[RMDB]
RNA sequence: GGGAACGACUCGAGUAGAGUCGAAAACCCAUCCUCUUCGGAGGAUGGGAAAAAGCGUACUACUGCUACUAUAAUGAACUACUCGGGACUCCCAAAUAGGAGUCACGAGCAUUACGAAUAGCAGUAUCGCAAAAACAUCAUUCUUCGGAAUGAUGAACAUAGGAAGGAUCUUCGGAUCCUUCCUAUGAAAAGAAACAACAACAACAAC
Reactivity to 2A3 in 0.01 (KOAc 150mM, MgCl2 10mM, bicine 150mM(pH8.5), 24C), signal-to-noise 4, nucleotides 027 to 156: c000c000c020a000u010c000c010u050c000u040u110c250g130g000a000g010g000a000u000g000g010g040a160a000a000a010a020g050c030g030u080a030c040u010a000c000u010g040c000u000a010c030u040a040u040a120a030u030g010a050a030c060u130a050c000u300c000g000g000g010a000c000u010c000c020c020a140a140a020u230a080g000g000a000g000u010c000a000c010g000a010g000c010a000u010u000a050c070g130a280a260u020a010g010c000a000g010u000a010u120c010g000c020a000a050a040a000a120c010a000u000c000a000u000u000c010u030u110c260g090g000a010a000u010g000a010u000g020a030a010
Reactivity to DMS in 0.01 (KOAc 150mM, MgCl2 10mM, bicine 150mM(pH8.5), 24C), signal-to-noise 2, nucleotides 027 to 156: c000c000c000a020u000c000c020u010c010u010u000c300g070g010a020g040g000a020u000g010g010g010a000a020a040a070a100g010c050g010u000a070c210u000a010c010u000g020c010u000a040c000u010a150u000a090a140u010g020a120a120c020u010a090c000u000c000g030g030g050a020c000u000c000c000c000a010a150a140u000a020g020g030a030g040u000c000a020c000g000a030g010c000a020u000u000a090c040g010a080a050u000a020g010c000a020g010u000a020u010c000g000c040a040a040a060a110a170c010a020u000c000a010u010u000c000u000u000c300g030g010a030a020u000g000a020u000g010a100a180

Chemical mapping of a 207-nucleotide RNA with 2A3 and DMS.
It was measured as part of the RMDB library RNAMAK.
DMS adducts were read by reverse transcription with MarathonRT.
As a SHAPE reagent, 2A3 marks flexible, mostly unpaired nucleotides at the ribose 2'-OH.